[RMDB]
RNA sequence: GGGAACGACUCGAGUAGAGUCGAAAAAUUGCUAUGGCCGACCUUUGGCUCAAUUGCAAAUUGAACGCCCACUAAGGCAACAAAGACAACAGCACUUUUGGCACAGACCCAACAUUUUGCAUUAAUAAACAUUGCAACAUUGUGGCAACAGGCGAAAGCUAUGGUAGUCCUUCGGGACUACCAUAGCAAAAGAAACAACAACAACAAC
Reactivity to 2A3 in 0.01 (KOAc 150mM, MgCl2 10mM, bicine 150mM(pH8.5), 24C), signal-to-noise 2, nucleotides 027 to 156: a000u020u020g000c010u000a040u110g010g060c040c030g100a200c140c260u250u190u280g010g000c050u060c130a090a100u090u060g000c000a010a040a110u020u110g040a110a060c090g080c000c080c000a040c080u080a100a130g050g000c010a050a020c040a100a230a050g080a030c080a050a030c000a050g100c030a050c060u030u020u070u070g020g010c040a030c000a040g050a030c040c010c000a020a060c040a050u080u120u050u110g000c010a000u000u070a130a030u130a190a110a020c070a030u020u020g020c000a020a050c020a080u050u090g010u110g050g000c000a030a010c020a040g000g030c010g090a050a060a000